[RMDB]
RNA sequence: GGGAACGACUCGAGUAGAGUCGAAAACUGAUGGUAGCAACGUUGAAGAGUUAGUUGCCACGACUGUUUGUGGAUCUGCCAACUUCGCAAACUUUUCGUAGAACUCAGUCUUGGUGGCAGGCGCUUCUGGCAACGCUUCAAUCACCAAAUCAGCGCCUCUAUUUCGUACCUUCGGGUACGAAAUAGAAAAAGAAACAACAACAACAAC
Reactivity to DMS in 0.01 (KOAc 150mM, MgCl2 10mM, bicine 150mM(pH8.5), 24C), signal-to-noise 1, nucleotides 027 to 156: c060u010g020a110u000g000g040u010a110g050c040a050a000c120g000u000u010g020a050a090g000a090g060u010u000a090g000u030u000g000c000c050a080c010g020a080c050u010g000u010u000u000g070u000g010g010a020u000c040u000g070c120c150a120a100c100u000u000c050g060c040a010a040a020c010u070u000u000u000c100g040u000a090g000a050a150c060u000c050a190g030u000c030u000u000g030g000u000g030g050c160a100g040g030c040g010c020u000u000c100u020g050g040c040a060a050c010g010c080u010u000c010a050a040u000c090a070c030c060a060a140a140u000c060a070g010c030g020c060c050
Reactivity to 2A3 in 0.01 (KOAc 150mM, MgCl2 10mM, bicine 150mM(pH8.5), 24C), signal-to-noise 3, nucleotides 027 to 156: c000u010g010a010u020g020g040u040a060g040c090a080a090c110g010u030u040g040a010a000g050a020g020u080u060a000g000u020u010g000c010c010a010c040g040a030c050u070g050u180u070u070g060u140g120g050a120u040c030u060g050c020c040a060a070c080u070u050c030g040c040a060a050a040c000u060u050u170u220c080g010u080a060g040a160a060c050u030c150a060g070u030c030u050u130g070g020u030g020g000c010a030g010g020c010g010c020u070u090c030u070g010g000c010a020a010c010g020c020u030u020c020a010a020u090c000a010c050c000a030a060a080u020c010a010g030c010g070c040c010